The record gives the reactivity of an RNA of 177 nucleotides to 2A3 and DMS.
Reactivities are given for positions 27 through 126.
DMS adducts were read by reverse transcription with MarathonRT.
[RMDB]
RNA sequence: GGGAACGACUCGAGUAGAGUCGAAAAAGGUUGAGCUCGUUAAGCUUCUGAACAAAAGCGUGACCCGUUCUAAUAGCGACCAUGGGAUUUGAUGGGCAGCUUAACGCCCGCCGGCCAUCAAUAGAUAAUGAUUUACCAUAUUCGUAUGGUAAAUCAUAAAAGAAACAACAACAACAAC
Reactivity to 2A3 in 0.01 (KOAc 150mM, MgCl2 10mM, bicine 150mM(pH8.5), 24C), signal-to-noise 9, nucleotides 027 to 126: a000g050g000u030u040g040a030g030c010u010c030g030u010u020a020a000g000c000u040u000c020u070g080a080a020c020a030a080a010a010g100c040g040u050g060a060c020c050c020g010u060u000c050u090a160a140u070a150g040c030g020a020c010c020a050u060g040g010g060a090u060u040u080g110a150u130g010g030g000c020a010g000c010u030u030a030a000c020g000c010c020c000g000c010c000g020g010c010c000a060u070c030a060a090u080a120g140a070u160a150
Reactivity to DMS in 0.01 (KOAc 150mM, MgCl2 10mM, bicine 150mM(pH8.5), 24C), signal-to-noise 7, nucleotides 027 to 126: a070g000g010u010u010g000a100g030c040u010c040g000u000u010a040a060g000c010u000u010c040u000g000a120a090c080a030a040a040a080g000c040g020u000g010a090c080c030c020g000u000u000c120u030a110a090u020a050g010c040g000a220c090c010a020u000g010g010g010a110u010u010u000g000a060u020g000g010g000c040a050g000c030u010u010a040a030c060g000c140c060c160g000c030c020g000g000c000c000a050u010c090a070a070u040a080g000a090u040a060

The reactions ran in a buffer of 150 mM KOAc, 10 mM MgCl2 and 150 mM bicine (pH 8.5), at 24 C.